Structure probing data (DMS and 2A3) for a 177-nucleotide construct. Conditions: 150 mM KOAc, 10 mM MgCl2 and 150 mM bicine (pH 8.5), 24 C. Source: RMDB library OK2TST, as collected in RNAgym. Values cover nucleotides 27 to 126. DMS adducts were read by reverse transcription with MarathonRT. 2A3 adducts were read by reverse transcription with SuperScript II with manganese.

RNA sequence: GGGAACGACUCGAGUAGAGUCGAAAAGAGCAAAAAUUACCCCUGCGACAUCGUCAGCGAUGGGUAAAGCCCGCACGCCUGCGAAUUCAGGGCGUUGUGUCCAACUUACUGGAUCUCGUGGCAACCGAAUUAUCAGCGAGUUCGCUCGCUGAUAAUUAAAAGAAACAACAACAACAAC
Reactivity to DMS in 0.01 (KOAc 150mM, MgCl2 10mM, bicine 150mM(pH8.5), 24C), signal-to-noise 3, nucleotides 027 to 126: g010a220g010c080a050a030a030a100a160u010u000a060c000c010c010c300u000g010c020g000a040c060a120u000c150g020u000c060a080g050c020g000a110u010g030g030g020u000a010a040a130g000c000c020c040g010c190a090c140g000c020c000u010g050c050g000a020a080u010u010c070a040g010g010g080c300g010u000u000g040u010g000u020c200c010a040a050c090u010u010a090c050u000g000g000a030u000c120u000c020g040u020g000g010c030a140a080c130c080g020
Reactivity to 2A3 in 0.01 (KOAc 150mM, MgCl2 10mM, bicine 150mM(pH8.5), 24C), signal-to-noise 1, nucleotides 027 to 126: g040a000g020c070a000a040a020a090a110u060u030a010c020c010c000c000u010g020c020g040a040c010a300u220c130g040u000c030a070g050c040g060a060u120g000g000g000u030a040a030a000g020c050c000c000g040c000a050c060g040c000c010u090g030c010g050a040a030u110u040c020a030g050g000g020c060g040u000u040g000u010g090u050c090c000a000a040c030u110u110a030c020u030g000g010a000u000c020u000c120g020u020g000g020c040a020a020c040c030g030